Chemical mapping of a 177-nucleotide RNA with DMS and 2A3. For 2A3 the reverse transcriptase was SuperScript II with manganese. The RNA was probed in 150 mM KOAc, 10 mM MgCl2 and 150 mM bicine (pH 8.5) at 24 C. In probing experiments dimethyl sulfate is read out at A N1 and C N3, which are open when not base-paired.

[RMDB]
RNA sequence: GGGAACGACUCGAGUAGAGUCGAAAAACGGGCAGUGGCGAUGGCAACGCGGCAGCCGCAGGGUCGACUUCUUCGCAGCCGCAACAGACGGGUCACGGGCAAAGAGGGGGCCUCGUUCUGUUGGAAGCACUAUCACUACUUUCGAGUAGUGAUAGUGAAAAGAAACAACAACAACAAC
Reactivity to DMS in 0.01 (KOAc 150mM, MgCl2 10mM, bicine 150mM(pH8.5), 24C), signal-to-noise 5, nucleotides 027 to 126: a100c080g010g000g010c040a050g020u000g000g000c030g000a070u020g010g010c050a090a110c120g010c020g010g010c050a100g010c060c040g000c060a050g010g010g020u010c050g000a080c080u010u010c020u010u010c070g000c060a090g000c030c040g000c000a020a020c030a010g000a030c020g000g000g010u000c020a070c060g000g000g000c120a090a070a100g020a110g010g000g000g000g010c030c000u010c040g010u020u000c020u000g000u000u000g000g010a120a080g020
Reactivity to 2A3 in 0.01 (KOAc 150mM, MgCl2 10mM, bicine 150mM(pH8.5), 24C), signal-to-noise 9, nucleotides 027 to 126: a010c030g010g020g010c030a040g030u060g070g020c030g060a090u070g050g010c030a060a040c040g000c000g050g000c010a020g030c020c020g010c020a040g030g020g020u050c010g030a060c010u060u020c000u040u040c060g010c060a030g030c010c020g020c010a010a010c010a010g030a010c010g010g000g010u010c030a030c090g030g080g010c120a120a110a020g070a090g050g050g000g000g000c000c000u110c030g030u130u030c010u010g010u010u000g020g020a050a010g030